[RMDB]
RNA sequence: GGGAACGACUCGAGUAGAGUCGAAAACAUAACUCAACGAUGAGUGCACAAAUCAGUGACAUCCUGUAUCCUGAAUGUCAUCUUGAUAGCCCUAUAGUAACAGGCAAACUGAUAUCUCUACUUAUCAGGCAGCGAUGAGGUUCGCCUCAUCGCUGCCAAAAGAAACAACAACAACAAC
Reactivity to 2A3 in 0.01 (KOAc 150mM, MgCl2 10mM, bicine 150mM(pH8.5), 24C), signal-to-noise 2, nucleotides 027 to 126: c020a030u200a080a040c000u000c060a000a090c100g130a010u060g000a000g090u300g040c050a070c000a050a200a000u040c000a010g000u090g020a050c000a030u160c020c000u050g050u010a250u160c020c000u020g000a070a040u090g070u000c000a050u020c120u090u090g000a020u050a020g000c000c000c050u160a130u010a050g180u190a050a000c000a000g000g160c000a100a100a000c030u070g010a000u000a000u020c000u040c000u050a160c040u050u030a000u240c040a030